The record gives the reactivity of an RNA of 177 nucleotides to DMS and 2A3.
[RMDB]
RNA sequence: GGGAACGACUCGAGUAGAGUCGAAAAUGCAAGGGUCUGUAAUAUGUUUUGUAAAUUCUAAAAGCCAUUUUUGGUUACAACCAUUAGCAGAUGCCAAAAUAGGUAUGUUAGAUGAUGCUACAGUGCCUGAUUGUGCGCUAUUCGUAGCGCACAAUCAAAAAGAAACAACAACAACAAC
Reactivity to DMS in 0.01 (KOAc 150mM, MgCl2 10mM, bicine 150mM(pH8.5), 24C), signal-to-noise 2, nucleotides 027 to 126: u010g000c080a020a120g000g010g000u000c010u000g000u000a080a120u020a080u060g050u050u050u000u010g010u000a070a100a050u020u000c000u020a030a030a010a160g000c050c180a300u000u000u000u020u000g000g010u000u000a120c140a040a010c300c090a150u050u050a120g040c110a080g130a150u010g020c000c000a040a070a030a000u000a150g000g000u000a060u000g010u020u000a020g000a020u000g000a150u010g000c030u000a010c020a050g030u030g010c000c050
Reactivity to 2A3 in 0.01 (KOAc 150mM, MgCl2 10mM, bicine 150mM(pH8.5), 24C), signal-to-noise 2, nucleotides 027 to 126: u110g000c060a040a130g000g000g010u010c000u000g000u110a120a010u050a020u130g030u110u120u160u040g080u040a080a080a170u100u060c060u060a080a090a080a000g010c000c000a100u000u080u000u070u000g000g000u010u030a000c030a110a050c030c040a060u090u040a030g080c080a010g050a020u130g160c020c050a000a000a000a070u010a030g000g000u040a110u110g010u020u020a020g010a010u170g000a020u240g020c000u000a000c000a050g110u000g030c040c020
The DMS profile rests on 1,791 reads.
Reactivities are given for positions 27 through 126.
Source: RMDB library OK1LIB, as collected in RNAgym.
For 2A3 the reverse transcriptase was SuperScript II with manganese.
As a SHAPE reagent, 2A3 marks flexible, mostly unpaired nucleotides at the ribose 2'-OH.